[RMDB]
RNA sequence: GGGAACGACUCGAGUAGAGUCGAAAAAUAACCUUCAUCGUGUAGUAAAUGUAGCAUCUGAUGAGCGGAUGAACCUAGUCAAGACAGUAGGAAAGCUAAUUGAUUUAGGUGACACAAUAGUGAAAGAACUGAUCUACGCUUUCGAGCGUAGAUCAGUAAAAGAAACAACAACAACAAC
Reactivity to DMS in 0.01 (KOAc 150mM, MgCl2 10mM, bicine 150mM(pH8.5), 24C), signal-to-noise 2, nucleotides 027 to 126: a130u000a040a180c040c000u030u020c090a080u000c050g110u000g000u000a130g000u020a050a100a090u030g040u010a140g040c040a010u010c070u000g000a130u000g010a130g040c130g030g000a030u000g010a250a040c010c000u000a000g000u040c040a070a010g000a230c300a030g000u000a050g030g040a140a150a140g000c010u000a000a230u000u000g000a000u000u000u000a040g040g030u000g000a070c100a020c090a020a040u000a190g000u000g000a040a160a040g010a100
Reactivity to 2A3 in 0.01 (KOAc 150mM, MgCl2 10mM, bicine 150mM(pH8.5), 24C), signal-to-noise 1, nucleotides 027 to 126: a000u070a010a070c010c000u050u000c030a040u060c020g010u030g010u070a170g030u050a010a170a140u250g060u180a070g000c000a020u070c000u040g040a080u040g060a030g110c100g040g000a060u030g000a010a000c010c000u000a020g030u000c000a010a010g060a240c060a090g170u140a030g300g000a100a080a000g040c010u030a020a020u030u030g010a010u090u230u110a000g000g030u030g090a010c010a000c000a040a150u140a080g160u200g060a160a000a010g110a110
The record gives the reactivity of an RNA of 177 nucleotides to DMS and 2A3. For DMS the reverse transcriptase was MarathonRT. For 2A3 the reverse transcriptase was SuperScript II with manganese. The RNA was probed in 150 mM KOAc, 10 mM MgCl2 and 150 mM bicine (pH 8.5) at 24 C. The DMS profile rests on 662 reads.